[RMDB]
Chemical mapping of a 207-nucleotide RNA with 2A3. For 2A3 the reverse transcriptase was SuperScript II with manganese. Values are in units of 0.01, from 0 to 300, in steps of 10. Conditions: 150 mM KOAc, 10 mM MgCl2 and 150 mM bicine (pH 8.5), 24 C. The data come from the RNA Mapping Database (RMDB), library OK3TST. Values cover nucleotides 27 to 156.

RNA sequence: GGGAACGACUCGAGUAGAGUCGAAAAGGACAAGAGACUUCAGAAAUGGCAAGUUCUUAGUUUGGGAGGCUAGGUAUUGAAGUUUAUCCAAAUUAAUUUGGAAGUUUAGAUCAGUUGCAAUCAAAAUCCUUAUUUGAUUGACAGUGGGGAUGGAUAAUGACCCAUUAGCAUUCGUGCUAAUGGGUCAAAAAGAAACAACAACAACAAC
Reactivity to 2A3 in 0.01 (KOAc 150mM, MgCl2 10mM, bicine 150mM(pH8.5), 24C), signal-to-noise 1, nucleotides 027 to 156: g030g000a020c020a020a010g020a010g040a060c010u020u010c080a020g030a150a160a080u210g050g070c040a020a090g020u130u020c050u030u060a040g020u050u070u070g000g000g000a040g020g000c020u000a020g000g000u060a060u040u180g000a050a010g010u000u040u150a120u000c000c000a000a000a050u120u170a030a130u030u140u000g020g000a030a030g030u000u130u110a010g020a050u070c020a070g020u200u010g080c000a000a000u000c010a010a030a030a050u020c010c030u060u050a060u060u080u000g000a020u000u010g060a060c050a020g000u050g050g020g000g020a040u000g060g000a020u000a120a030